[RMDB]
RNA sequence: GGGAACGACUCGAGUAGAGUCGAAAAGAAUCACCGUACCUAUUUAGGUUUACGCUCCAAGAUCGGCGGAUAGCAGCCCUAUCAAUAUCUAGGAGAACUGUGCUAUGUUUAGAAGAUUAGGUAGUCUAUUACACAGCCAUGUUCGCAUGGCUGUGAAGCAUGAUUUAGACUUCGGUCUAAAUCAUGCAAAAGAAACAACAACAACAAC
Reactivity to DMS in 0.01 (KOAc 150mM, MgCl2 10mM, bicine 150mM(pH8.5), 24C), signal-to-noise 1, nucleotides 027 to 156: g000a110a060u020c010a150c010c010g050u010a020c010c000u000a180u000u000u000a040g020g010u000u000u000a040c080g000c020u000c030c050a080a150g030a040u000c080g000g000c020g000g010a110u000a110g000c050a190g000c040c040c020u000a160u000c060a050a080u000a080u010c070u020a090g000g010a020g000a140a040c110u010g000u000g000c050u000a050u010g030u010u000u010a100g040a110a050g000a040u030u010a090g030g030u000a030g000u000c030u000a040u010u030a270c050a000c030a020g030c010c010a020u000g050u000u000c280g060c020a070u010g030g010c000u000g000u000g000a020a080
Reactivity to 2A3 in 0.01 (KOAc 150mM, MgCl2 10mM, bicine 150mM(pH8.5), 24C), signal-to-noise 2, nucleotides 027 to 156: g030a060a070u020c010a000c080c030g000u020a020c000c000u050a150u170u140u220a040g010g000u030u000u090a030c030g010c010u000c010c010a090a050g000a100u060c050g030g000c000g080g000a030u020a020g000c050a010g030c000c000c040u010a010u050c040a100a120u020a010u230c020u060a030g020g040a040g020a060a030c060u080g000u020g120c000u060a050u090g120u070u070u030a140g000a220a010g000a060u090u060a020g060g000u000a000g030u000c030u010a120u140u090a080c000a000c000a000g000c000c000a000u010g010u050u020c060g000c080a010u000g000g000c010u000g000u000g000a000a010